About this RNA
Conditions: 150 mM KOAc, 10 mM MgCl2 and 150 mM bicine (pH 8.5), 24 C. An RNA of 177 nucleotides, treated with DMS and read out base by base. DMS adducts were read by reverse transcription with MarathonRT. For DMS, 763 sequencing reads were counted.
RNA sequence: GGGAACGACUCGAGUAGAGUCGAAAAUUCGCCCUGUGUCGCGCGACCGACAGCACUCACAGCCCCGCAUAUCCCACCCUGGAGCUCAAUCUGGCCCAACAGCCGCUUUUGCGGGUCCAGAGGGCAACGACUGUAGCUCUUUCGAGAGCUACAGUCGAAAAGAAACAACAACAACAAC
Reactivity to DMS in 0.01 (KOAc 150mM, MgCl2 10mM, bicine 150mM(pH8.5), 24C), signal-to-noise 1, nucleotides 027 to 126: u020u000c000g020c050c000c100u030g050u000g010u000c020g060c050g050c050g000a180c090c020g010a100c080a120g000c020a100c060u000c060a040c150a100g070c020c020c000c070g010c070a050u000a150u000c020c040c000a140c050c020c040u000g030g010a120g010c050u000c050a000a050u010c050u010g020g000c050c000c020a100a180c190a160g010c050c000g040c070u000u010u000u010g010c080g010g010g020u010c010c010a010g000a220g020g010g050c040a110a060